[RMDB]
RNA sequence: GGGAACGACUCGAGUAGAGUCGAAAAUUCGUAUGGCAGAUUUACUUGAAAAAGAAACAUUCGAAAGAUUAUUAAAAUCAAACAUUGAAUAUAAACAAGCAUAUUUCAAAGGUAUGUUUAACGAAACCUCUCAUAACAGUUUCGACUGUUAUGAGAGAAAAGAAACAACAACAACAAC
Reactivity to 2A3 in 0.01 (KOAc 150mM, MgCl2 10mM, bicine 150mM(pH8.5), 24C), signal-to-noise 4, nucleotides 027 to 126: u030u010c000g010u010a010u050g030g050c120a070g050a220u150u090u090a140c020u050u080g120a090a050a000a000a010g050a050a070a020c020a050u020u040c020g040a060a020a010g030a030u030u020a050u090u200a260a130a020a040u050c020a010a050a080c050a070u070u150g030a100a010u110a060u070a150a110a040c050a120a000g040c010a020u020a010u010u170u130c140a180a100a000g040g000u020a000u010g030u000u060u070a060a030c030g040a060a000a040c010
Reactivity to DMS in 0.01 (KOAc 150mM, MgCl2 10mM, bicine 150mM(pH8.5), 24C), signal-to-noise 2, nucleotides 027 to 126: u020u000c040g000u020a040u000g000g010c090a170g000a110u000u010u000a060c010u020u000g010a020a110a110a050a120g020a270a090a120c130a020u000u000c000g010a050a060a140g030a110u000u020a130u000u030a040a040a010a030u000c000a060a100a140c120a080u000u010g000a020a000u120a050u050a080a070a110c120a050a100g020c020a020u000a020u010u000u000c170a050a010a060g010g020u010a010u000g000u000u010u000a000a060c060g000a060a060a090c120
Overview:
This 177-nucleotide RNA was probed chemically with 2A3 and DMS. Reactivities are rounded to 0.1 and cut off at 0 and 3. For DMS, 2,511 sequencing reads were counted. The data come from the RNA Mapping Database (RMDB), library OK1LIB. 2A3 adducts were read by reverse transcription with SuperScript II with manganese.